[RMDB]
RNA sequence: GGGAACGACUCGAGUAGAGUCGAAAAAUUCUGCCCAUGCGGGGAAGGAUGAGAAGCUUCGACCAAGGUUCGACUCGAGCGCCAGCGAGAGAGCGUUGCCGCAGGCAACGACCCGAAGGGCGAAGCGACGGUAUUCCUGUUUCGACAGGAAUACCGUAAAAGAAACAACAACAACAAC
Reactivity to 2A3 in 0.01 (KOAc 150mM, MgCl2 10mM, bicine 150mM(pH8.5), 24C), signal-to-noise 6, nucleotides 027 to 126: a010u030u000c010u070g060c010c020c010a080u260g100c160g010g000g040g040a100a020g030g060a040u100g070a050g040a150a000g010c000u010u000c010g090a130c010c010a040a040g070g020u080u090c040g070a060c020u010c010g010a010g000c010g050c040c010a020g010c010g000a020g000a010g010a010g060c010g000u000u000g020c010c030g270c150a080g010g010c000a010a000c010g040a050c000c030c010g020a090a200g010g010g000c000g010a000a000g000c020g000
Reactivity to DMS in 0.01 (KOAc 150mM, MgCl2 10mM, bicine 150mM(pH8.5), 24C), signal-to-noise 5, nucleotides 027 to 126: a080u000u010c030u000g000c050c000c020a150u040g020c160g010g000g000g000a060a050g010g000a050u010g000a120g020a110a140g000c020u000u000c000g000a030c010c020a140a250g000g000u000u020c130g000a190c010u010c010g010a240g010c010g020c100c120a090g000c000g000a170g010a220g000a140g000c020g000u000u000g010c000c010g030c250a080g030g020c000a010a010c000g000a080c060c010c020g010a140a080g000g000g000c000g000a010a010g010c020g010
This 177-nucleotide RNA was probed chemically with 2A3 and DMS. For 2A3 the reverse transcriptase was SuperScript II with manganese. Conditions: 150 mM KOAc, 10 mM MgCl2 and 150 mM bicine (pH 8.5), 24 C.